[RMDB]
Record summary
This 177-nucleotide RNA was probed chemically with DMS and 2A3. The RNA was probed in 150 mM KOAc, 10 mM MgCl2 and 150 mM bicine (pH 8.5) at 24 C. The data come from the RNA Mapping Database (RMDB), library TTRDES. Reactivities are given for positions 27 through 126.
RNA sequence: GGGAACGACUCGAGUAGAGUCGAAAAAAAAAGAUAUGGACUAAAGGGAGGCAUGAGAGCGUUUGACGUUAAUCGGAAACGAUUAACCGAGCUCACAUGCCGAAGAACUUUAGUCCUAAGUCAAAAAUCAUAGUGUUAUGUUCGCAUAACACUAUGAAAAAGAAACAACAACAACAAC
Reactivity to DMS in 0.01 (KOAc 150mM, MgCl2 10mM, bicine 150mM(pH8.5), 24C), signal-to-noise 5, nucleotides 027 to 126: a050a060a040a070a080g000a030u010a300u000g000g010a010c000u000a010a020a000g000g000g000a080g000g000c000a000u000g010a090g000a010g010c000g010u010u020u010g020a160c300g010u000u000a010a000u000c000g030g000a150a080a150c000g000a010u000u000a000a000c000c030g000a080g010c010u000c010a110c010a000u000g010c000c000g000a020a070g010a100a120c000u000u000u000a010g010u000c000c000u000a010a070g000u020c020a060a070a070a130a140
Reactivity to 2A3 in 0.01 (KOAc 150mM, MgCl2 10mM, bicine 150mM(pH8.5), 24C), signal-to-noise 2, nucleotides 027 to 126: a010a010a000a000a030g060a050u100a030u110g000g000a000c000u020a010a020a010g040g010g010a030g010g000c000a020u020g020a030g000a010g130c040g100u200u300u290g080a060c020g000u000u020a020a000u010c020g010g030a090a060a020c000g000a010u010u000a010a010c000c010g020a020g020c000u010c010a040c010a000u000g000c000c010g000a030a000g010a000a020c000u030u000u010a000g000u010c000c000u000a010a010g020u010c030a000a000a040a060a240